[RMDB]
RNA sequence: GGGAACGACUCGAGUAGAGUCGAAAAAAGACAUUUGGAUUAUUUCCACUUUUUAGCUGUUAUAACUAAUGCUGUGAACAUUCAUGUACAAGUUACUGUGGGGACAUACGUGCUUACCUCUCUUGCGUAUAUACUUGGGAAUGGAAUUGCUAAGUCAGGGUAAUAUGCUGUUCGCAGCAUAUUACCCAAAAGAAACAACAACAACAAC
Reactivity to 2A3 in 0.01 (KOAc 150mM, MgCl2 10mM, bicine 150mM(pH8.5), 24C), signal-to-noise 1, nucleotides 027 to 156: a000a000g260a250c240a250u300u000u050g040g000a010u060u040a070u240u170u050c010c020a040c060u020u000u120u000u210a010g000c020u040g050u170u050a210u010a120a040c040u040a100a070u090g090c120u000g040u010g140a050a010c010a020u020u020c020a020u160g010u060a010c000a010a010g040u030u060a040c000u040g060u110g120g010g010g000a000c050a000u090a010c100g010u050g040c000u060u140a150c000c000u110c040u010c040u010u040g000c000g040u000a010u000a000u000a140c000u010u000g020g020g020a110a000u020g000g000a040a070u010u010g120c010u020a020a020g050u000c050a040